[RMDB]
This 170-nucleotide RNA was probed chemically with DMS. DMS adducts were read by reverse transcription with MarathonRT. It was measured as part of the RMDB library 15KLIB.
RNA sequence: GGGAACGACUCGAGUAGAGUCGAAAAGUUUGCUAUAAUAGUGAUUAUGCAGCUAAGGGUUACAUUGCUGGAAUACAGAAUUUUAAGGAAACGCUGUAUUAUCAGAACAAUGUCUUUAUGUCUGAAGAACCCCGCCCCUUCGGGGGCGGGAAAAGAAACAACAACAACAAC
Reactivity to DMS in 0.01 (KOAc 150mM, MgCl2 10mM, bicine 150mM(pH8.5), 24C), signal-to-noise 1, nucleotides 027 to 129: g000u020u020u020g000c000u020a200u040a090a030u010a060g050u100g000a240u000u000a000u000g020c020a050g170c020u050a000a000g010g100g000u090u100a150c030a020u000u000g000c010u010g040g000a000a070u000a000c000a060g000a000a160u000u030u000u060a120a070g080g000a050a040a130c300g010c000u020g000u000a000u010u010a060u000c090a080g000a110a070c000a000a000u000g000u000c030u000u000u110a010u000g000u060c100u110g000a060a000g000a090a000c120